[RMDB]
RNA sequence: GGGAACGACUCGAGUAGAGUCGAAAACAAGCGAUGCAUUCGAGGCGAGGACGAGAGCAUUGUUAGGACCUUUGGGACAAGCGACGCAUACAGUUGAUCCACACUAACGUUGGUGUCGACAUACUAUCAGUCUCUAAGGAUUGAAAGUAAGUUGAUAGAUCGUUAUUCAGUUCGCUGAAUAACGAUCAAAAGAAACAACAACAACAAC
Reactivity to DMS in 0.01 (KOAc 150mM, MgCl2 10mM, bicine 150mM(pH8.5), 24C), signal-to-noise 1, nucleotides 027 to 156: c070a120a100g040c030g020a100u020g000c090a120u000u000c090g020a150g010g070c020g020a040g000g010a090c000g000a090g010a040g050c000a130u000u020g020u000u000a070g000g020a060c080c080u010u000u000g030g030g010a080c060a050a090g050c070g050a040c070g000c080a120u000a120c040a130g040u000u010g000a070u000c000c040a090c070a110c050u000a040a120c070g000u000u000g040g070u000g010u000c030g020a070c010a140u000a050c020u030a170u000c000a020g020u020c020u000c030u000a180a130g000g010a040u000u020g030a010a080a020g050u000a030a090g060u010u010g010a100u000a190
Reactivity to 2A3 in 0.01 (KOAc 150mM, MgCl2 10mM, bicine 150mM(pH8.5), 24C), signal-to-noise 3, nucleotides 027 to 156: c040a010a010g070c030g090a050u070g020c030a090u050u140c070g060a060g050g020c060g030a060g030g030a030c050g020a000g010a000g060c000a070u080u090g040u130u100a030g000g060a020c000c000u020u040u040g000g000g040a030c030a070a000g010c010g080a030c060g020c070a030u090a140c060a060g030u030u020g060a090u020c040c020a110c010a020c010u130a160a070c070g040u040u050g010g050u000g000u010c000g000a020c000a040u040a020c000u010a040u130c020a000g020u020c000u020c030u130a080a030g060g010a070u030u080g010a070a050a010g020u080a100a020g000u020u030g020a010u020a060

About this RNA
This 207-nucleotide RNA was probed chemically with DMS and 2A3. Conditions: 150 mM KOAc, 10 mM MgCl2 and 150 mM bicine (pH 8.5), 24 C. 2A3 adducts were read by reverse transcription with SuperScript II with manganese. Reactivities are given for positions 27 through 156.